[RMDB]
RNA sequence: GGGAACGACUCGAGUAGAGUCGAAAACAUGCGCGCAAGAACAGCCGCGUUCAUGCAGAGUCGAGAGCCCUUCUGGUUCGUUGCGUGACUGUAGAAAUAUACAUCUUGCGCCUGAGCGUCGGCUCGGUCUACUCAUCGGGUUCGCUCGGUGGGUAGAAAAAGAAACAACAACAACAAC
Reactivity to DMS in 0.01 (KOAc 150mM, MgCl2 10mM, bicine 150mM(pH8.5), 24C), signal-to-noise 9, nucleotides 027 to 126: c060a050u030g010c150g010c010g010c000a020a010g000a050a070c090a040g010c050c020g010c020g000u010u020c080a050u010g010c080a090g000a050g010u010c030g000a080g000a060g000c020c030c140u040u030c130u020g010g010u010u010c050g010u010u000g010c010g010u000g000a050c030u000g000u010a070g010a080a090a100u040a110u040a110c210a210u010c020u000u000g000c010g000c000c030u000g000a040g000c090g000u020c080g010g000c010u000c020g010g010
Reactivity to 2A3 in 0.01 (KOAc 150mM, MgCl2 10mM, bicine 150mM(pH8.5), 24C), signal-to-noise 9, nucleotides 027 to 126: c040a030u160g010c050g000c000g000c060a010a010g020a090a020c020a050g030c020c010g010c010g010u040u040c040a050u120g060c050a020g010a010g060u070c040g070a020g010a050g180c010c030c000u120u090c080u100g050g010u060u050c050g060u100u100g000c010g020u020g030a060c010u020g020u050a040g120a130a170a020u280a020u030a060c050a080u010c010u010u010g000c000g000c000c000u020g020a030g020c040g080u090c060g070g000c000u000c010g000g030
The record gives the reactivity of an RNA of 177 nucleotides to DMS and 2A3. It was measured as part of the RMDB library OK1LIB. The DMS profile rests on 95,093 reads. The RNA was probed in 150 mM KOAc, 10 mM MgCl2 and 150 mM bicine (pH 8.5) at 24 C. DMS adducts were read by reverse transcription with MarathonRT. 2A3 adducts were read by reverse transcription with SuperScript II with manganese.